[RMDB]
RNA sequence: GGGAACGACUCGAGUAGAGUCGAAAAUGACGGAAAGGUAGCGGAAUACCAUGACAAAAUUCAUUGUGACACCUUCAAGCAACGCUUUGGACAGCUGUGUCUUUCCUUCUAUGAUAGAAUCAAGCUGAAUGACUACGGAGUUCGCUCCGUAGUCAUUAAAAGAAACAACAACAACAAC
Reactivity to 2A3 in 0.01 (KOAc 150mM, MgCl2 10mM, bicine 150mM(pH8.5), 24C), signal-to-noise 3, nucleotides 027 to 126: u140g030a030c070g010g030a050a060a050g050g000u020a010g120c070g020g110a050a030u070a060c020c030a020u060g020a020c080a060a090a020a060u120u110c070a070u020u040g050u020g050a020c000a040c050c000u090u050c070a060a050g030c060a170a080c090g010c000u070u040u140g010g020a020c030a020g030c020u030g010u030g030u070c000u000u000u060c030c000u040u070c100u070a120u130g130a100u040a140g100a050a130u180c120a110a000g000c020u090g050
Reactivity to DMS in 0.01 (KOAc 150mM, MgCl2 10mM, bicine 150mM(pH8.5), 24C), signal-to-noise 3, nucleotides 027 to 126: u020g020a060c100g010g010a060a030a050g000g000u000a060g010c030g000g000a090a090u000a110c030c050a080u020g020a100c180a050a030a070a090u050u010c070a030u020u020g000u000g000a150c060a050c050c040u010u030c110a040a120g000c040a070a140c150g010c030u000u010u010g020g040a030c120a120g000c040u030g000u010g000u000c020u000u000u000c010c010u000u020c100u000a100u030g000a060u010a070g010a030a240u010c050a030a040g000c090u000g000
The data come from the RNA Mapping Database (RMDB), library OK1LIB. Chemical mapping of a 177-nucleotide RNA with 2A3 and DMS. For 2A3 the reverse transcriptase was SuperScript II with manganese. Reactivities are rounded to 0.1 and cut off at 0 and 3. For DMS the reverse transcriptase was MarathonRT. The DMS profile rests on 3,983 reads. 2A3 is a SHAPE reagent: it acylates the 2'-hydroxyl of flexible nucleotides of all four kinds.